[RMDB]
RNA sequence: GGGAACGACUCGAGUAGAGUCGAAAAGUUGACCAACGUCACCGAUGACCUCAUCGACCGUUGUUGGGCGCCUAAGGUCUACGGCGCGUGGAACCUACACCAGGCCCUGCAAGAAGGAAAAACCGCAGACUGAUUAUCCCUUCGGGGAUAAUCAGUCAAAAGAAACAACAACAACAAC
Reactivity to DMS in 0.01 (KOAc 150mM, MgCl2 10mM, bicine 150mM(pH8.5), 24C), signal-to-noise 1, nucleotides 027 to 126: g040u000u080g030a120c060c080a070a110c140g110u010c040a110c050c000g010a250u010g000a010c090c160u010c080a040u000c060g030a080c150c030g050u000u030g000u000u000g010g000g000c040g090c130c030u010a090a090g000g000u000c000u000a300c010g030g000c060g100c080g030u010g000g000a090a190c090c110u000a090c030a050c120c060a080g010g040c050c000c010u000g000c080a110a090g000a100a030g040g000a020a030a030a110a190c100c050g030c250a100